[RMDB]
RNA sequence: GGGAACGACUCGAGUAGAGUCGAAAACAAUCUAUUUUUACUAUUAAUAGUGUGGUCCAAAAGGAUGGUGUUGAAAACACUCCUCCUCACUAUUUUACUCUUGGAUGCAAAAUUUUAACGCUCACCCUACGUAAUAGGUUCGCCUAUUACAAAAGAAACAACAACAACAAC
Reactivity to 2A3 in 0.01 (KOAc 150mM, MgCl2 10mM, bicine 150mM(pH8.5), 24C), signal-to-noise 9, nucleotides 027 to 129: c020a030a080u040c020u090a240u040u120u050u110u130a110c050u050a050u290u080a030a020u000a000g000u010g010u020g030g020u080c110c070a060a060a030a030g040g010a040u170g060g130u020g050u040u110g180a080a060a020a000c010a000c000u010c000c000u010c000c000u000c000a000c000u000a020u010u050u040u050a070c030u060c020u080u080g040g020a030u070g040c060a040a070a130a160u090u170u110u110a120a040c060g010c020u010c030a060c010c000c000u020a030c060
Reactivity to DMS in 0.01 (KOAc 150mM, MgCl2 10mM, bicine 150mM(pH8.5), 24C), signal-to-noise 9, nucleotides 027 to 129: c040a100a090u050c050u070a000u020u030u030u020u030a120c070u040a100u080u020a030a020u000a040g030u040g030u020g040g030u100c090c120a030a030a060a010g020g020a060u050g000g000u000g030u020u020g080a110a060a070a060c000a020c040u000c020c010u030c030c010u000c020a040c030u030a050u010u030u030u020a070c080u020c030u040u050g000g050a000u040g040c100a060a030a090a140u040u050u040u040a060a110c150g000c030u000c060a060c010c000c000u040a080c120